[RMDB]
RNA sequence: GGGAACGACUCGAGUAGAGUCGAAAAGAUAUGGAUCGGACAGGGAGACGGUCGGAAACGACUCGUCAUCGAUCUGUUCGAUCCUAAGUCAAACCAACCAUUGCUCGUUCGCGAGCAAUGGUUGGAAUCAUUACGAGUACUUCGGUACUCGUAAUGAAAAAGAAACAACAACAACAAC
Reactivity to 2A3 in 0.01 (KOAc 150mM, MgCl2 10mM, bicine 150mM(pH8.5), 24C), signal-to-noise 3, nucleotides 027 to 126: g020a010u080a020u110g000g000a000u000c000g010g000a000c010a010g060g000g020a040g010a000c000g000g010u000c000g010g020a100a040a030c010g000a010c090u080c300g020u000c010a050u130c000g000a070u000c000u010g010u000u000c010g010a000u010c000c010u000a020a000g000u000c040a020a050a120c010c000a020a000c010c000a010u000u010g000c010u010c030g070u120u090c300g020c030g210a010g000c010a000a000u000g010g000u000u000g000g000a000a040
Reactivity to DMS in 0.01 (KOAc 150mM, MgCl2 10mM, bicine 150mM(pH8.5), 24C), signal-to-noise 4, nucleotides 027 to 126: g010a040u000a300u010g000g010a010u000c010g010g000a000c010a020g000g020g000a050g020a010c010g030g010u000c000g000g000a090a080a210c010g000a010c000u000c030g040u000c000a160u000c160g000a070u020c010u000g000u000u000c000g000a000u000c000c000u000a000a060g010u010c030a080a130a220c000c000a000a010c000c010a010u000u000g010c000u000c000g030u000u010c210g020c010g010a010g010c000a000a000u000g000g000u000u000g000g010a020a030